[RMDB]
RNA sequence: GGGAACGACUCGAGUAGAGUCGAAAAGUAGAAUCUGUCAAGCAAAACCCCAAAACCUUACACUGAGAGCAUUUAGCCUGAUUACUCUUUAAAUCAAAUCAGGCAAGAGAGAGAAACUCGAGAGGUGAAACGGGAGUAAUGUUCGCAUUACUCCCAACCCUAAAUUACAGUUCGCUGUAAUUUAGGGAAAAGAAACAACAACAACAAC
Reactivity to 2A3 in 0.01 (KOAc 150mM, MgCl2 10mM, bicine 150mM(pH8.5), 24C), signal-to-noise 4, nucleotides 027 to 156: g050u070a030g030a090a100u040c050u080g130u130c100a070a040g050c030a040a050a100a180c020c010c020c040a020a110a060a070c040c040u140u140a050c090a050c090u140g060a020g000a000g020c030a040u040u050u070a020g000c000c000u010g000a020u000u050a070c010u000c030u130u300u180a060a070a040u170c080a010a010a000u000c000a000g000g000c000a000a000g020a000g000a000g000a000g030a040a080a020c020u010c020g050a070g010a010g110g030u050g030a100a020a070c080g000g000g000a000g000u000a000a000u000g020u040u030c110g000c120a000u000u000a000c000u000c000c000c000a010a000
Reactivity to DMS in 0.01 (KOAc 150mM, MgCl2 10mM, bicine 150mM(pH8.5), 24C), signal-to-noise 1, nucleotides 027 to 156: g000u010a110g000a110a120u000c030u030g020u010c020a080a070g030c060a080a060a110a050c000c000c010c060a030a080a110a130c130c060u000u000a060c110a040c090u030g000a080g020a030g010c030a300u000u000u000a090g040c000c010u000g000a030u000u000a070c050u010c030u010u010u000a040a080a040u000c080a040a090a030u000c020a000g000g090c000a060a010g000a160g010a070g020a140g000a100a000a020c000u000c000g000a070g040a060g010g040u010g010a090a090a060c130g040g010g030a040g030u000a020a010u000g020u010u020c140g040c020a040u010u000a030c020u000c000c000c000a000a010